[RMDB]
RNA sequence: GGGAACGACUCGAGUAGAGUCGAAAAAUGUGGAGGCCUGCCGCCUGGAGUGGUGACUUUCUACAUCUGCGCCAUUGACAUCGAACUGGUGCCACGGCUGAGGGUAGCUGAGGAGCAGGGAAACGAGGAACUUACAUGGGUUCGCCCAUGUAAGUUCAAAAGAAACAACAACAACAAC
Reactivity to DMS in 0.01 (KOAc 150mM, MgCl2 10mM, bicine 150mM(pH8.5), 24C), signal-to-noise 2, nucleotides 027 to 126: a090u010g010u000g010g000a060g000g020c040c040u010g040c030c050g010c020c050u000g040g020a130g030u010g020g010u000g000a050c070u000u000u000c040u000a090c040a070u010c060u000g030c060g000c030c010a150u000u000g000a040c040a070u000c060g000a100a090c210u010g040g020u010g000c040c030a070c150g000g020c010u000g000a110g020g010g010u000a040g020c100u020g020a100g000g010a050g000c040a070g000g000g000a070a050a090c150g000a110g010
Reactivity to 2A3 in 0.01 (KOAc 150mM, MgCl2 10mM, bicine 150mM(pH8.5), 24C), signal-to-noise 1, nucleotides 027 to 126: a000u090g030u020g020g020a000g030g000c000c060u060g030c020c030g010c000c060u090g050g040a210g040u090g060g000u040g020a060c020u120u120u010c030u050a060c020a070u000c020u020g000c000g040c030c010a050u020u100g020a080c060a040u080c020g110a080a060c040u120g010g000u060g000c000c030a040c060g050g020c050u040g030a040g040g060g040u090a020g030c020u000g020a010g010g050a060g050c020a020g030g000g000a060a070a010c020g020a060g080